[RMDB]
RNA sequence: GGGAACGACUCGAGUAGAGUCGAAAAAUCUUCUUCACCACGUCGCCUAAAGUUCUUAAAUCCCCCGACCAUUUGCGUUCAAUUUGCAUUGCGUAUACGCCGAGUGGUCCGUCGCCCUUCGCAGUGCGAGUACCACCCGUUUCGACGGGUGGUACUCAAAAGAAACAACAACAACAAC
Reactivity to 2A3 in 0.01 (KOAc 150mM, MgCl2 10mM, bicine 150mM(pH8.5), 24C), signal-to-noise 3, nucleotides 027 to 126: a010u010c040u080u010c000u100u090c040a020c040c000a060c010g050u010c010g000c020c020u110a150a140a090g070u020u040c030u040u140a100a160a170u050c000c010c010c000c010g000a070c010c010a060u010u000u120g030c040g030u030u170c100a070a160u070u050u140g050c030a030u020u070g030c010g050u090a070u020a190c030g000c000c030g050a000g020u030g000g000u070c020c000g040u010c010g000c010c000c000u060u020c040g030c000a000g010u010g030c010
Reactivity to DMS in 0.01 (KOAc 150mM, MgCl2 10mM, bicine 150mM(pH8.5), 24C), signal-to-noise 1, nucleotides 027 to 126: a030u010c030u000u000c160u000u000c020a000c010c020a080c060g000u030c040g000c050c040u010a020a060a100g020u000u000c100u020u080a160a050a140u000c000c000c000c000c050g000a050c030c020a060u000u010u000g020c080g070u010u000c170a120a050u030u000u000g020c110a120u000u010g010c210g000u060a060u080a110c040g000c000c000g000a060g010u000g000g050u000c000c070g000u000c160g000c050c010c020u040u000c020g000c030a040g000u000g010c090
Background:
Chemical mapping of a 177-nucleotide RNA with 2A3 and DMS. Reactivities are rounded to 0.1 and cut off at 0 and 3.